[RMDB]
The data come from the RNA Mapping Database (RMDB), library OK2TST.
The record gives the reactivity of an RNA of 177 nucleotides to 2A3 and DMS.
For 2A3 the reverse transcriptase was SuperScript II with manganese.
The reactions ran in a buffer of 150 mM KOAc, 10 mM MgCl2 and 150 mM bicine (pH 8.5), at 24 C.
DMS adducts were read by reverse transcription with MarathonRT.

RNA sequence: GGGAACGACUCGAGUAGAGUCGAAAAGUCAGUAUUCCAAUCGGUUCGCCUGCACCAUGUCCCGGAACAGGCAGGGCCACCAGCGUGGCAUGACGCAGGUCGUCUUUUACAGCGCCAGAAGGGACAAGUAAUGAUAUACGUUCGCGUAUAUCAUUACAAAAGAAACAACAACAACAAC
Reactivity to 2A3 in 0.01 (KOAc 150mM, MgCl2 10mM, bicine 150mM(pH8.5), 24C), signal-to-noise 9, nucleotides 027 to 126: g090u050c060a020g060u060a170u060u040c010c020a020a080u120c080g030g020u040u030c060g070c080c010u040g010c080a030c020c020a090u090g010u000c010c000c000g000g010a060a040c030a020g010g010c010a020g020g020g000c000c020a020c010c020a030g020c020g060u030g120g120c090a060u140g040a000c010g000c030a020g020g010u050c010g010u000c000u020u070u000u070a110c070a060g050c040g020c080c020a020g050a050a070g020g000g000a000c000a010a020
Reactivity to DMS in 0.01 (KOAc 150mM, MgCl2 10mM, bicine 150mM(pH8.5), 24C), signal-to-noise 9, nucleotides 027 to 126: g010u010c100a080g010u010a110u000u000c020c030a120a090u010c130g020g010u000u010c080g010c020c000u010g000c150a130c030c030a100u000g010u000c010c000c000g010g010a140a160c110a040g010g020c020a100g000g000g000c010c030a040c030c030a090g020c070g010u000g010g010c130a080u000g010a040c020g020c030a070g010g010u000c260g010u000c020u000u000u010u010a090c160a110g010c110g010c030c030a080g000a220a160g000g010g010a020c050a060a120